Source: RMDB library OK2TRN, as collected in RNAgym.
The record gives the reactivity of an RNA of 177 nucleotides to DMS and 2A3.
The RNA was probed in 150 mM KOAc, 10 mM MgCl2 and 150 mM bicine (pH 8.5) at 24 C.
Values cover nucleotides 27 to 126.
[RMDB]
RNA sequence: GGGAACGACUCGAGUAGAGUCGAAAACGCCGCUGCCGCCGUUACCGGCUUCCGCGUUGCUGGGAGAAUUGGUGCCCACCUGGGCAUCCCCGCCUUCGCCGCCGGCGCCCCCCACACCGCCGGGGGCGUACCGUCAGCUGUUCGCAGCUGACGGUACAAAAGAAACAACAACAACAAC
Reactivity to DMS in 0.01 (KOAc 150mM, MgCl2 10mM, bicine 150mM(pH8.5), 24C), signal-to-noise 2, nucleotides 027 to 126: c080g030c040c060g030c060u010g000c040c040g040c070c030g000u000u000a050c140c060g010g010c030u000u010c070c140g020c060g010u010u010g010c050u000g020g010g000a120g000a110a090u010u020g050g010u000g010c020c000c010a230c280c180u000g000g030g010c010a030u000c010c000c020c000g010c110c060u000u000c070g000c030c040g000c020c000g000g020c010g000c010c020c000c030c030c060a070c100a070c170c020g020c040c060g020g010g010g010g010c050
Reactivity to 2A3 in 0.01 (KOAc 150mM, MgCl2 10mM, bicine 150mM(pH8.5), 24C), signal-to-noise 1, nucleotides 027 to 126: c020g040c020c020g040c010u030g020c000c030g040c050c020g100u100u170a080c060c010g060g000c070u010u030c050c060g000c040g030u040u040g060c130u130g000g090g040a170g080a240a260u210u170g000g020u010g000c000c000c010a150c080c150u200g020g000g010c000a010u030c000c000c000c000g020c000c030u040u080c050g000c010c010g070c020c010g000g030c000g020c010c020c030c010c020c000a030c000a010c000c030g000c000c000g000g000g030g000g010c020